[RMDB]
Annotation: The data come from the RNA Mapping Database (RMDB), libraries RFM100 and RFMREP. This 177-nucleotide RNA was probed chemically with DMS and 2A3. For DMS the reverse transcriptase was MarathonRT. The RNA was probed in 150 mM KOAc, 10 mM MgCl2 and 150 mM bicine (pH 8.5) at 24 C.
RNA sequence: GGGAACGACUCGAGUAGAGUCGAAAAAGACCAGGUGUACGCACCUGGUCAAUUUUUAGGGAAAAUUUGGCCUUCCAACAAUGGGAGGCCAGGGAAUUUUCUUACGGCUGAUAUACGUAUCAGCCGACUUUAAUCAGCCAUUCGUGGCUGAUUAAAGAAAAGAAACAACAACAACAAC
Reactivity to DMS in 0.01 (KOAc 150mM, MgCl2 10mM, bicine 150mM(pH8.5), 24C), signal-to-noise 3, nucleotides 027 to 126: a150g020a000c000c000a010g000g010u000g020u010a070c170g010c010a010c000c000u010g000g030u010c000a000a000u010u010u020u000u040a090g000g000g000a020a000a020a040u000u010u000g020g000c000c000u010u000c000c000a070a180c300a170a130u030g000g020g010a000g000g010c000c000a000g000g020g030a050a030u000u000u000u000c000u010u010a080c000g010g000c000u030g010a000u000a020u010a120c200g030u000a000u000c000a000g000c010c010g010a010
Reactivity to 2A3 in 0.01 (KOAc 150mM, MgCl2 10mM, bicine 150mM(pH8.5), 24C), signal-to-noise 7, nucleotides 027 to 126: a000g030a010c010c000a000g010g000u010g020u040a060c280g010c070a000c010c000u020g010g000u000c000a000a000u010u000u000u020u090a020g000g000g030a010a010a020a020u030u040u040g010g010c010c000u010u010c020c010a120a120c160a300a300u120g000g010g000a000g000g000c000c000a000g000g020g010a010a010u010u000u010u010c000u020u060a040c010g000g000c000u010g010a000u010a000u010a030c290g040u010a000u020c000a000g000c000c000g000a000